[RMDB]
RNA sequence: GGGAACGACUCGAGUAGAGUCGAAAACUCAAACUUUGCUGAAUCCUGCAGAACAUUCCCACAUUUGAAAACCCCAUAAUCCUUUAAAAGUUUUAUGUGUAAACUCUCAAACAAUCAGGCAUAAGAGAUGCACGAAAUAUUUCGAUAUUUCGUGCAUAAAAGAAACAACAACAACAAC
Reactivity to DMS in 0.01 (KOAc 150mM, MgCl2 10mM, bicine 150mM(pH8.5), 24C), signal-to-noise 3, nucleotides 027 to 126: c040u010c050a080a060a110c170u020u000u050g010c040u020g010a040a090u020c040c000u010g020c000a090g000a110a090c110a080u010u010c020c000c000a170c170a160u010u040u010g000a050a060a040a090c080c080c020c010a030u010a000a050u000c010c010u050u020u080a040a090a140a160g000u020u000u000u000a020u010g000u000g000u000a080a040a080c050u010c030u000c050a070a020a020c090a060a110u030c110a050g000g040c100a040u010a080a080g010a070g000
Reactivity to 2A3 in 0.01 (KOAc 150mM, MgCl2 10mM, bicine 150mM(pH8.5), 24C), signal-to-noise 6, nucleotides 027 to 126: c050u060c020a040a060a110c080u130u090u140g010c010u040g020a060a070u030c000c000u010g000c010a020g020a120a020c020a060u020u040c010c020c000a050c030a060u110u110u070g060a070a070a030a040c020c010c000c010a010u020a020a030u030c020c040u050u160u160a090a190a040a010g030u010u020u010u000a010u010g130u000g050u080a040a100a060c020u020c010u010c060a010a040a110c020a020a120u090c050a030g080g020c040a060u060a170a020g040a010g010
Description:
Structure probing data (DMS and 2A3) for a 177-nucleotide construct. Source: RMDB libraries RFM100 and RFMREP, as collected in RNAgym. Reactivities are rounded to 0.1 and cut off at 0 and 3.